[RMDB]
The data come from the RNA Mapping Database (RMDB), library OK3TST. The record gives the reactivity of an RNA of 207 nucleotides to 2A3 and DMS. For 2A3, 1,353 sequencing reads were counted.
RNA sequence: GGGAACGACUCGAGUAGAGUCGAAAAAAAUUGGGACCGCCGUCGCUGACAUCAACACCCGGAUGGGCCUCACCGGCCCGACCCUGGAAAAAGUCGCCUCCCAGUACCUCGAGGCCGGCCGCGUCCUCGGCGAGGCGGUCGACGUCGGGAAGACCUCCAAUCGUUACUUAUUCGUAAGUAACGAUUGAAAAGAAACAACAACAACAAC
Reactivity to 2A3 in 0.01 (KOAc 150mM, MgCl2 10mM, bicine 150mM(pH8.5), 24C), signal-to-noise 2, nucleotides 027 to 156: a000a000a020u140u040g030g020g000a030c040c010g040c040c010g260u040c030g010c030u030g020a040c000a110u090c060a070a070c020a070c040c020c010g020g000a070u100g030g010g000c000c000u040c020a100c020c070g000g010c000c010c000g020a030c010c010c000u010g010g030a090a030a010a010a030g070u040c020g000c040c010u040c000c030c000a050g080u100a130c020c050u040c040g010a040g000g090c100c070g000g000c010c010g060c030g090u010c010c020u060c050g000g020c050g000a000g020g000c000g000g000u000c000g000a000c000g060u060c010g000g030g060a070a040g060a090c000c020u040c050
Reactivity to DMS in 0.01 (KOAc 150mM, MgCl2 10mM, bicine 150mM(pH8.5), 24C), signal-to-noise 1, nucleotides 027 to 156: a040a020a050u020u010g010g000g000a040c020c010g000c020c000g040u000c010g030c010u000g040a130c110a140u000c070a050a070c050a150c000c010c040g040g030a150u000g010g000g000c010c010u010c180a120c170c100g010g010c010c020c000g000a030c020c020c020u010g030g010a090a100a080a070a050g000u000c020g030c030c020u010c010c010c000a170g010u000a160c090c020u000c020g020a030g000g020c010c010g010g010c010c050g020c030g000u000c040c030u000c120g030g000c020g010a100g030g000c000g010g000u000c020g000a000c020g040u000c010g000g000g020a120a110g000a090c030c020u000c030